[RMDB]
RNA sequence: GGGAACGACUCGAGUAGAGUCGAAAAGCACUAGAGGGCGUAACGGCUGGGUGUAACCCAACUCUACGUGUGCUGAUUAGCGGGCUUGACUCCGUAACAAAUAGGCACUGGUGGUAAAAAGCAUCCCUGACCAUAUACAUCUUCGGAUGUAUAUGAAACAUUAUAAUAGGUUCGCCUAUUAUAAUGUAAAAGAAACAACAACAACAAC
Reactivity to 2A3 in 0.01 (KOAc 150mM, MgCl2 10mM, bicine 150mM(pH8.5), 24C), signal-to-noise 4, nucleotides 027 to 156: g010c010a000c020u020a020g000a060g070g090g010c030g020u060a100a040c070g080g000c020u020g000g000g020u080g080u110a090a100c000c010c010a020a020c010u030c010u030a030c060g060u050g010u010g040c010u010g010a120u050u100a020g020c010g010g030g010c070u110u160g040a100c030u010c050c010g010u010a040a000c010a030a050a040u130a060g020g010c010a000c050u040g050g000u030g020g040u090a080a080a030a020a020g030c030a050u040c000c010c000u020g050a050c030c000a000u010a000u000a010c000a000u010c000u030u040c180g110g010a000u010g000u010a000u000a000u000g000a030a010
Reactivity to DMS in 0.01 (KOAc 150mM, MgCl2 10mM, bicine 150mM(pH8.5), 24C), signal-to-noise 4, nucleotides 027 to 156: g020c010a070c020u000a080g010a100g020g020g020c010g020u000a020a120c090g020g020c010u010g000g030g000u010g020u010a050a300c000c020c010a010a040c010u010c010u000a030c030g000u000g020u010g010c000u000g010a150u000u000a150g000c020g010g010g020c060u010u010g020a100c100u000c010c020g020u000a080a150c110a040a080a100u010a130g010g000c010a110c040u000g040g030u000g010g000u010a020a040a080a090a080g000c070a140u000c010c010c020u000g000a190c210c010a010u000a020u000a010c010a000u010c000u000u010c300g060g000a020u000g010u000a010u000a010u000g010a100a090
The data come from the RNA Mapping Database (RMDB), library M2RFPK. Chemical mapping of a 207-nucleotide RNA with 2A3 and DMS. Values cover nucleotides 27 to 156. The reactions ran in a buffer of 150 mM KOAc, 10 mM MgCl2 and 150 mM bicine (pH 8.5), at 24 C. DMS adducts were read by reverse transcription with MarathonRT. For 2A3 the reverse transcriptase was SuperScript II with manganese.